This 177-nucleotide RNA was probed chemically with 2A3 and DMS. The reactions ran in a buffer of 150 mM KOAc, 10 mM MgCl2 and 150 mM bicine (pH 8.5), at 24 C. The data come from the RNA Mapping Database (RMDB), library TTRDEL. As a SHAPE reagent, 2A3 marks flexible, mostly unpaired nucleotides at the ribose 2'-OH. DMS adducts were read by reverse transcription with MarathonRT.
[RMDB]
RNA sequence: GGGAACGACUCGAGUAGAGUCGAAAAGAUAUGGAAUCAUUAGCCUUUUGACGCCUUUCGGAAACGAGGAGGCGAUAAGGCUGUGAUUCCUAAGUCAAAGUAGGAUAUGGUUCGCCAUAUCCUACAACUCUAGCAUCGUGUUCGCACGAUGCUAGAGAAAAGAAACAACAACAACAAC
Reactivity to 2A3 in 0.01 (KOAc 150mM, MgCl2 10mM, bicine 150mM(pH8.5), 24C), signal-to-noise 3, nucleotides 027 to 126: g060a000u090a070u150g000g020a010a000u000c060a010u160u300a150g000c030c020u070u140u080u240g210a080c040g000c000c010u030u050u050c000g000g000a070a060a070c000g010a030g160g030a010g000g000c010g000a000u020a040a010g010g010c000u040g000u000g000a010u000u000c000c000u010a100a030g040u000c100a220a060a050g000u000a000g000g020a000u000a000u010g040g030u030u180c290g000c070c000a000u000a000u020c000c000u000a010c000a000a020
Reactivity to DMS in 0.01 (KOAc 150mM, MgCl2 10mM, bicine 150mM(pH8.5), 24C), signal-to-noise 2, nucleotides 027 to 126: g020a000u000a300u000g000g000a000a010u000c030a030u000u000a010g040c000c000u010u000u000u000g010a220c050g000c000c000u000u000u030c000g000g000a140a070a210c000g020a020g000g010a000g000g010c000g030a040u000a030a010g020g010c000u040g000u010g000a000u010u000c000c000u000a020a090g000u000c010a150a100a140g010u000a010g010g000a010u000a000u000g000g010u020u000c240g020c000c000a010u000a000u000c000c000u030a000c010a030a020